An RNA of 177 nucleotides, treated with 2A3 and DMS and read out base by base. Values cover nucleotides 27 to 126. The data come from the RNA Mapping Database (RMDB), library TTRDEL. For DMS the reverse transcriptase was MarathonRT. Reactivities are rounded to 0.1 and cut off at 0 and 3.
RNA sequence: GGGAACGACUCGAGUAGAGUCGAAAAGAUAUGGACCAACUACCCACCAGCUCGAAGAACUUUCUCGGAAACGAGAAAGGGAGAGCAUGAGGUUGGUCCUAAGUCAAAACGGAUCUUCGGAUCCGAACCACUAUUAAUGGUUCGCCAUUAAUAGUGGAAAAGAAACAACAACAACAAC
Reactivity to 2A3 in 0.01 (KOAc 150mM, MgCl2 10mM, bicine 150mM(pH8.5), 24C), signal-to-noise 7, nucleotides 027 to 126: g060a040u170a090u260g000g000a000c000c000a010a000c010u160a180c010c030c030a060c040c060a040g000c000u020c010g300a300a060g010a040a010c010u000u010u000c010u000c000g020g030a060a060a040c000g000a000g000a000a000a000g010g000g000a040g000a000g010c040a050u060g040a030g010g000u000u010g010g000u010c000c000u010a010a000g080u040c060a020a010a100a170c010g010g000a010u000c000u050u080c280g130g000a000u000c000c000g000a010a020
Reactivity to DMS in 0.01 (KOAc 150mM, MgCl2 10mM, bicine 150mM(pH8.5), 24C), signal-to-noise 7, nucleotides 027 to 126: g010a080u010a170u000g000g010a010c000c000a010a020c010u000a150c050c030c020a300c160c040a050g000c000u000c000g000a100a150g010a190a150c000u000u000u000c000u000c000g020g000a070a060a110c000g010a010g000a000a000a000g000g000g000a040g000a000g020c010a040u000g010a070g010g000u000u000g000g010u000c000c000u000a010a090g000u010c090a070a050a110a190c040g010g000a010u000c000u000u000c180g020g000a010u000c000c000g000a030a080